[RMDB]
RNA sequence: GGGAACGACUCGAGUAGAGUCGAAAAGCUUUAUAUUAAGAAUAGUAGUGUCAAUAAUAACAAUAAUGAGAAUUAGUAUUUCUUAAAUACUGUGUAUAGGCACUAUGCCUAGCAUUUGUUGUGACUCGCUGUAUUUGUUGAAGAAUAUAAUAAAUGAAGCUAAUAGUCUAUUCGUAGACUAUUAGCUAAAAGAAACAACAACAACAAC
Reactivity to 2A3 in 0.01 (KOAc 150mM, MgCl2 10mM, bicine 150mM(pH8.5), 24C), signal-to-noise 1, nucleotides 027 to 156: g000c000u030u210u140a050u170a080u300u190a110a000g020a050a050u050a200g030u020a030g020u000g020u050c020a020a030u080a150a110u120a140a020c030a120a030u210a170a130u110g000a050g050a060a050u040u070a050g050u140a140u050u050u070c060u080u080a080a140a050u080a040c020u000g000u000g030u020a050u000a300g000g000c000a000c080u060a140u170g020c000c000u000a000g020c000a050u010u000u140g010u020u000g000u010g020a020c050u030c060g020c070u000g040u070a120u150u060u030g020u000u060g020a030a080g030a230a020u100a030u040a120a030u100a040a100a080u210g030a020
Reactivity to DMS in 0.01 (KOAc 150mM, MgCl2 10mM, bicine 150mM(pH8.5), 24C), signal-to-noise 1, nucleotides 027 to 156: g000c040u010u010u000a110u000a150u050u030a020a160g000a150a130u000a070g010u000a030g020u010g010u000c040a090a140u060a120a140u000a080a030c020a080a000u000a030a300u000g000a080g000a110a060u000u000a190g010u000a080u010u000u000c010u020u010a020a110a140u000a030c020u000g000u010g020u000a080u000a010g020g000c050a240c080u000a130u000g070c000c020u000a020g010c020a200u000u000u000g000u000u000g000u000g020a080c010u000c060g000c070u010g000u010a050u000u000u020g010u000u010g000a080a160g000a100a070u010a060u000a030a060u010a050a040a100u020g010a140

This 207-nucleotide RNA was probed chemically with 2A3 and DMS. The DMS profile rests on 1,463 reads. It was measured as part of the RMDB library OK3TST. DMS adducts were read by reverse transcription with MarathonRT. The RNA was probed in 150 mM KOAc, 10 mM MgCl2 and 150 mM bicine (pH 8.5) at 24 C. 2A3 adducts were read by reverse transcription with SuperScript II with manganese.